[RMDB]
RNA sequence: GGGAACGACUCGAGUAGAGUCGAAAACCGGACGCGGUGGCCUGUCGUGCCGGCAGAAACUGCGGAGCAUGGUGACCGGUACACAAUGAUAAUCUCAUCACAGCAACAGGUCGAUCUUCUGUGUAGAAUACGCAGCGGAUUUCGAUCCGCUGCGUAUAAAAGAAACAACAACAACAAC
Reactivity to DMS in 0.01 (KOAc 150mM, MgCl2 10mM, bicine 150mM(pH8.5), 24C), signal-to-noise 2, nucleotides 027 to 126: c000c000g000g000a120c200g090c110g050g000u030g040g040c050c000u000g030u000c070g030u000g060c050c060g020g020c060a130g000a050a280a110c110u020g000c010g060g060a190g000c000a140u000g020g000u000g010a000c050c010g020g050u000a050c170a210c200a170a040u000g050a010u040a020a270u040c230u020c230a220u000c070a000c300a140g000c270a100a040c030a060g000g000u000c000g000a130u050c060u000u000c000u000g000u030g040u000a100g000a090
Reactivity to 2A3 in 0.01 (KOAc 150mM, MgCl2 10mM, bicine 150mM(pH8.5), 24C), signal-to-noise 2, nucleotides 027 to 126: c000c000g000g070a030c030g000c020g010g030u020g000g060c030c000u020g000u050c020g020u040g070c000c000g050g000c000a000g020a060a130a050c040u030g000c010g130g070a040g040c020a080u100g100g000u000g060a060c000c040g000g010u030a010c060a000c030a070a300u150g080a110u080a040a120u060c050u010c160a020u050c000a040c030a120g090c030a040a110c000a020g010g010u050c000g030a130u050c000u040u000c000u070g000u000g000u020a010g030a190
Description
Chemical mapping of a 177-nucleotide RNA with DMS and 2A3. 2A3 adducts were read by reverse transcription with SuperScript II with manganese.